[RMDB]
RNA sequence: GGGAACGACUCGAGUAGAGUCGAAAAGCAAUCCUCGUUCGCGAGGAUUGCAAAAACCGUAGGAUUUAGCUUUUGACGAAUAGUGCUUCGAAAGAGGCAUGGGUUCGAUAAGUCAAAUCCUAAACGGAAAAAAUAGAAGGUAUUCGUACCUUCUAAACUACAUAACAACCUUCGGGUUGUUAUGUAGAAAAGAAACAACAACAACAAC
Reactivity to 2A3 in 0.01 (KOAc 150mM, MgCl2 10mM, bicine 150mM(pH8.5), 24C), signal-to-noise 3, nucleotides 027 to 156: g020c000a000a010u020c000c000u010c010g050u070u080c220g000c010g120a000g000g000a000u000u000g010c010a020a000a010a000a000c030c000g000u010a010g000g000a000u020u020u030a020g030c010u120u070u070u180g190a100c030g000a010a000u030a020g010u000g000c010u010u010c000g080a110a080a070g000a000g000g050c020a010u020g040g100g020u000u010c000g040a020u020a030a020g050u080c010a010a000a000u010c010c010u040a100a120a030c020g020g000a060a060a040a080a000a010u120a010g000a000a000g020g000u030a020u030u180c290g030u040a030c000c000u000u000c000u010a000a000a010
Reactivity to DMS in 0.01 (KOAc 150mM, MgCl2 10mM, bicine 150mM(pH8.5), 24C), signal-to-noise 2, nucleotides 027 to 156: g010c000a000a000u000c010c020u010c020g010u000u000c290g020c040g020a050g020g020a020u000u000g000c050a000a040a020a050a020c010c000g040u010a050g020g000a020u000u000u000a010g010c000u010u000u000u010g020a220c070g010a070a060u010a300g010u000g000c000u020u000c000g010a160a090a260g000a020g010g000c000a000u000g000g020g020u000u000c000g030a140u010a000a000g010u000c000a000a000a020u000c000c000u000a000a050a140c000g010g000a000a010a090a150a120a200u000a020g010a020a000g020g050u000a040u000u000c270g020u000a020c010c000u000u010c000u000a000a090a180